Chemical mapping of a 177-nucleotide RNA with 2A3 and DMS. The DMS profile rests on 1,143 reads. The reactions ran in a buffer of 150 mM KOAc, 10 mM MgCl2 and 150 mM bicine (pH 8.5), at 24 C. Reactivities are given for positions 27 through 126. It was measured as part of the RMDB library M2PK90.
RNA sequence: GGGAACGACUCGAGUAGAGUCGAAAAAUAAAGCAACGCGAGCAACGCGAGCAACGCGAGCAACGCGAGCAACGCGAGCAACGCGAGCUACGCGAGCAACGCGAGCAACGCGAGCAACGCGAAAAAACCAUUGGUAAAUGUUCGCAUUUACCAAUGGAAAAGAAACAACAACAACAAC
Reactivity to 2A3 in 0.01 (KOAc 150mM, MgCl2 10mM, bicine 150mM(pH8.5), 24C), signal-to-noise 3, nucleotides 027 to 126: a000u140a040a060a010g040c050a090a100c030g010c020g030a060g030c030a070a210c020g000c020g010a000g040c020a110a130c010g020c010g020a050g020c050a120a130c000g000c010g030a000g050c030a110a210c000g040c000g000a080g140c080a160a200c010g010c010g010a010g000c030u140a130c000g000c000g000a040g000c020a100a160c010g000c000g020a010g000c010a050a190c000g000c000g000a040g040c060a150a080c020g000c020g030a080a010a000a000a000a020
Reactivity to DMS in 0.01 (KOAc 150mM, MgCl2 10mM, bicine 150mM(pH8.5), 24C), signal-to-noise 2, nucleotides 027 to 126: a030u000a050a120a120g020c160a150a160c000g020c030g010a080g000c020a110a100c000g000c000g010a180g000c030a100a030c030g010c000g020a150g000c010a110a080c010g030c020g000a110g000c120a070a070c030g020c000g040a160g020c210a090a160c040g020c000g010a260g000c000u000a020c000g020c000g020a140g010c040a110a020c030g000c020g000a180g000c000a090a050c020g010c010g030a180g000c060a130a130c000g010c000g010a020a020a020a090a050a100